Chemical mapping of a 177-nucleotide RNA with DMS and 2A3. The DMS profile rests on 2,225 reads. The RNA was probed in 150 mM KOAc, 10 mM MgCl2 and 150 mM bicine (pH 8.5) at 24 C. The 2A3 profile rests on 4,480 reads. It was measured as part of the RMDB library M2PK90.

RNA sequence: GGGAACGACUCGAGUAGAGUCGAAAAAUUACGGGCGGCGCAGGUGGAGCUGCGAUCCCUCCGCCCAUCGCGUGCUCUCUCGGUGGCCCAGACGCUGCAAACGGACAGGCCGGCCACCUGCAACGAACCUGAUAGUUUCAUUCGUGAAACUAUCAGGAAAAGAAACAACAACAACAAC
Reactivity to DMS in 0.01 (KOAc 150mM, MgCl2 10mM, bicine 150mM(pH8.5), 24C), signal-to-noise 3, nucleotides 027 to 126: a110u010u000a090c090g010g020g000c010g000g030c220g040c120a020g010g000u010g010g000a150g010c030u010g000c050g000a070u000c000c060c030u020c020c010g010c010c010c030a050u010c080g010c050g000u010g020c020u010c070u010c060u010c070g000g020u000g010g010c020c000c100a120g020a100c040g010c010u000g000c130a110a120a120c150g010g000a160c070a060g000g000c030c090g010g020c010c010a080c020c000u020g000c050a090a060c120g010a090a120
Reactivity to 2A3 in 0.01 (KOAc 150mM, MgCl2 10mM, bicine 150mM(pH8.5), 24C), signal-to-noise 2, nucleotides 027 to 126: a000u190u140a070c080g000g000g000c020g000g000c040g000c030a010g010g030u090g090g080a070g070c010u010g000c030g020a050u040c010c000c000u020c000c020g000c010c000c010a030u080c020g020c030g040u050g020c020u010c010u020c010u010c110g020g020u000g010g000c030c000c030a050g040a050c070g000c050u080g010c030a110a150a160c050g030g060a060c010a040g010g050c000c000g010g000c000c000a020c040c010u000g020c010a040a040c030g040a020a060